[RMDB]
RNA sequence: GGGAACGACUCGAGUAGAGUCGAAAACGUUGUAUUUUCUAGCAAUACAACAAAUUUAUCAUACGAAUAAGGGAGAACCUAGAAAUCCAGUGUUUCGGGUUUAUUUCGAGCGGAAAGUUUCAGAUGCCCUUAUGAGCUAGUUCGCUAGCUCAUAAGGAAAAGAAACAACAACAACAAC
Reactivity to 2A3 in 0.01 (KOAc 150mM, MgCl2 10mM, bicine 150mM(pH8.5), 24C), signal-to-noise 5, nucleotides 027 to 126: c020g010u000u000g000u010a010u000u070u060u040c100u080a020g050c040a050a020u040a050c000a010a000c000a010a030a000u070u080u040a150u080c090a040u060a220c080g020a170a040u090a170a050g030g050g010a050g020a010a010c020c010u060a150g010a010a040a000u040c050c040a070g040u030g050u180u000u000c000g000g030g000u000u020u030a190u050u200u020c010g020a070g000c050g070g110a070a070a030g000u000u000u000c040a060g020a200u130g060c010
Reactivity to DMS in 0.01 (KOAc 150mM, MgCl2 10mM, bicine 150mM(pH8.5), 24C), signal-to-noise 2, nucleotides 027 to 126: c160g000u010u000g000u000a000u010u000u000u040c070u020a050g040c110a080a040u010a000c030a020a030c040a030a100a100u040u030u020a050u020c080a090u020a130c160g000a060a040u000a060a090g000g030g000a130g000a070a060c120c000u000a020g000a030a050a000u000c050c140a070g000u010g000u000u000u000c000g010g000g010u000u000u000a020u010u000u010c000g010a000g000c030g020g000a040a120a080g000u020u000u000c020a090g010a070u060g000c200